[RMDB]
RNA sequence: GGGAACGACUCGAGUAGAGUCGAAAAGAUAUGGAUCACACUCCCCACCUAUUACAUCGGAAACGAUGUGUAGAGGUGUGAGUCCUAAGUCAAAACCGCAACAGCGAGUUCGCUCGCUGUUGCGGAAGAUAGAUUGAUUGUUCGCAAUCAAUCUAUCAAAAGAAACAACAACAACAAC
Reactivity to 2A3 in 0.01 (KOAc 150mM, MgCl2 10mM, bicine 150mM(pH8.5), 24C), signal-to-noise 4, nucleotides 027 to 126: g080a020u220a090u300g010g010a010u000c010a010c000a010c020u100c070c010c000c000a020c020c000u010a020u080u300a010c010a010u010c010g010g030a040a060a020c020g000a000u000g000u000g000u020a010g000a010g010g000u000g010u000g000a030g300u060c000c010u080a200a000g140u100c060a020a020a140a200c010c000g000c030a010a000c010a000g010c020g020a000g000u080u160c300g120c160u000c000g000c020u000g010u000u020g030c020g010g000a000a000
Reactivity to DMS in 0.01 (KOAc 150mM, MgCl2 10mM, bicine 150mM(pH8.5), 24C), signal-to-noise 5, nucleotides 027 to 126: g020a080u000a230u000g010g000a210u000c000a020c000a010c000u000c110c010c000c040a300c100c000u010a010u010u010a010c000a010u000c000g000g000a110a100a170c000g010a010u000g010u010g000u010a000g000a130g010g010u000g010u000g000a020g010u010c000c000u000a080a140g010u010c060a070a070a160a150c000c000g000c000a010a010c000a010g030c000g000a030g030u000u020c240g010c000u000c000g000c010u000g000u000u000g000c020g010g000a000a020

Source: RMDB library TTRDEL, as collected in RNAgym.
The record gives the reactivity of an RNA of 177 nucleotides to 2A3 and DMS.
DMS adducts were read by reverse transcription with MarathonRT.
Conditions: 150 mM KOAc, 10 mM MgCl2 and 150 mM bicine (pH 8.5), 24 C.